Structure probing data (DMS and 2A3) for a 177-nucleotide construct.

RNA sequence: GGGAACGACUCGAGUAGAGUCGAAAAAGCGGUAGUCGAGCAGGCCACUGUCGGUGGCGGCCGCCAGCUCGUCGAGCAGCACCUGGUUCAGGUCGCCACGGGUGAUCUCGAUGUCGGCGAUGGCGCACACCUGCUGGUGGUUCGCCACCAGCAGGUGAAAAGAAACAACAACAACAAC
Reactivity to DMS in 0.01 (KOAc 150mM, MgCl2 10mM, bicine 150mM(pH8.5), 24C), signal-to-noise 1, nucleotides 027 to 126: a070g020c000g010g000u010a090g010u010c030g010a020g020c150a050g010g000c030c020a020c000u000g010u000c040g000g000u010g020g000c010g000g000c000c020g030c010c010a040g010c110u020c030g040u010c110g000a160g020c140a080g000c090a000c260c060u000g000g010u000u010c160a080g020g030u010c040g020c010c000a010c050g000g000g000u000g020a050u010c020u000c140g010a050u000g000u000c050g000g000c000g000a090u010g010g000c010g010c060a220
Reactivity to 2A3 in 0.01 (KOAc 150mM, MgCl2 10mM, bicine 150mM(pH8.5), 24C), signal-to-noise 2, nucleotides 027 to 126: a000g030c070g070g050u100a040g000u030c000g000a030g030c020a010g010g060c010c020a010c040u220g140u300c140g240g010u000g000g010c000g000g040c000c000g000c000c010a010g000c040u090c120g070u040c100g020a080g060c090a030g040c030a090c020c040u030g030g020u090u220c160a040g050g000u000c000g000c000c000a030c020g000g000g000u050g000a040u030c010u000c050g040a110u170g140u210c000g020g000c020g000a030u090g020g090c070g000c020a040
About this RNA: For DMS, 1,498 sequencing reads were counted. For 2A3 the reverse transcriptase was SuperScript II with manganese. The reactions ran in a buffer of 150 mM KOAc, 10 mM MgCl2 and 150 mM bicine (pH 8.5), at 24 C.